[RMDB]
RNA sequence: GGGAACGACUCGAGUAGAGUCGAAAAUGUCGAUAAAGUAGGAAUGGGGGAUCUUUUUGAAUACAAUAGAAUCACAGUUUGAUAAGGUUGCAGAAGAUUACGAUUUCGUGAAUGAGCUUUUGAAUGAAACACUUUGGCGUUUCGACGCCAAAGUGUUAAAAGAAACAACAACAACAAC
Reactivity to DMS in 0.01 (KOAc 150mM, MgCl2 10mM, bicine 150mM(pH8.5), 24C), signal-to-noise 1, nucleotides 027 to 126: u040g000u000c100g000a030u010a100a040a030g010u030a130g030g030a020a040u010g010g030g010g000g000a010u050c030u000u020u000u060u000g000a020a000u010a050c050a020a120u000a020g000a210a050u030c010a020c150a230g000u050u000u000g030a070u090a040a140g000g090u000u000g020c080a030g000a040a020g020a130u020u010a110c010g000a070u000u010u000c190g000u000g000a020a040u000g000a040g000c030u010u000u010u000g000a080a180u010g000a070